[RMDB]
RNA sequence: GGGAACGACUCGAGUAGAGUCGAAAAGGAACCUGGUCGCGAAGACGUCAUAGAGGUUGUCGACCGUCCGUGUCGUCAUUUAUCCACCUGGAGAAAAUGUUCCUAGCUGCGACUUUCGCCAGGAAGGAGAUGGAAUGUAGCCUCUUGAUCUGCAGCCUACGACUCUGAAAUUCGUUUCAGAGUCGUAAAAAGAAACAACAACAACAAC
Reactivity to 2A3 in 0.01 (KOAc 150mM, MgCl2 10mM, bicine 150mM(pH8.5), 24C), signal-to-noise 4, nucleotides 027 to 156: g080g010a020a040c000c040u040g020g030u090c040g020c080g110a130a050g040a050c050g000u010c010a020u140a180g010a010g040g010u070u020g080u090c020g000a010c030c030g150u190c090c120g150u280g010u140c010g010u010c010a030u010u060u080a110u000c010c000a030c010c010u000g020g000a040g000a030a040a070a120u200g060u120u080c020c010u040a100g040c130u070g010c040g050a010c000u000u010u000c010g000c010c000a000g000g030a020a100g020g010a060g010a020u060g010g080a110a080u140g050u130a040g020c000c010u000c000u020u010g030a060u010c030u120g010c020a020g020c000c000
Reactivity to DMS in 0.01 (KOAc 150mM, MgCl2 10mM, bicine 150mM(pH8.5), 24C), signal-to-noise 2, nucleotides 027 to 156: g030g000a080a090c000c020u010g020g040u020c030g040c050g010a120a130g000a120c030g010u000c020a050u010a030g010a070g020g020u000u010g020u010c030g010a040c000c020g000u010c120c090g010u010g010u010c020g000u010c000a090u010u020u000a110u020c010c000a230c000c010u000g030g010a050g000a040a010a020a040u000g020u000u000c000c000u000a220g010c080u010g040c040g000a070c030u000u010u000c000g010c000c000a030g000g000a170a150g000g020a080g000a040u010g020g000a100a090u000g020u010a090g020c020c010u000c020u000u000g010a050u000c020u000g030c020a120g010c010c050
An RNA of 207 nucleotides, treated with 2A3 and DMS and read out base by base.
High 2A3 reactivity points to a flexible backbone, as in loops and unpaired stretches.
Values cover nucleotides 27 to 156.